[RMDB]
RNA sequence: GGGAACGACUCGAGUAGAGUCGAAAAGUACGACAACUUAUUACGCAUCUUCGUACGAUCGAUGCUAAGAUUAGUGGCGAAAGCCACAAGCACGGGCAUUCAUAAGUCAGAUCCGAGAGGAUUUGACGUCCUAGCCUGUGCAAGACUAGGUCAGACAACUAUACGAUCAGUUCGCUGAUCGUAUAGUAAAAGAAACAACAACAACAAC
Reactivity to DMS in 0.01 (KOAc 150mM, MgCl2 10mM, bicine 150mM(pH8.5), 24C), signal-to-noise 4, nucleotides 027 to 156: g030u000a020c050g010a100c160a090a080c040u000u010a080u010u000a100c130g020c040a090u000c030u000u000c020g020u010a060c030g020a210u010c060g000a080u000g000c010u000a060a140g020a160u010u000a090g030u000g000g000c010g000a180a110a250g000c000c000a010c020a030a100g030c010a020c000g020g010g010c020a140u000u000c070a130u030a070a100g010u000c000a010g010a010u010c010c000g010a300g000a300g030g010a030u000u000u000g000a020c010g000u000c040c040u000a120g000c000c000u010g020u000g000c030a030a010g010a120c030u000a040g000g010u000c050a280g020a080c050a120
Reactivity to 2A3 in 0.01 (KOAc 150mM, MgCl2 10mM, bicine 150mM(pH8.5), 24C), signal-to-noise 1, nucleotides 027 to 156: g080u060a020c030g040a020c050a120a030c090u110u110a060u160u090a130c110g000c010a010u010c020u070u050c020g120u130a080c120g030a050u070c060g020a010u030g000c020u030a020a010g030a130u080u170a030g010u000g000g010c010g030a070a020a020g000c000c000a010c010a010a000g000c000a010c000g000g010g000c010a020u060u070c040a050u220a210a050g000u000c000a000g000a010u000c000c010g050a050g000a020g050g000a000u000u000u010g000a000c000g000u020c000c020u020a020g000c000c000u010g000u000g010c000a010a000g030a020c060u070a010g050g030u040c030a020g030a120c030a040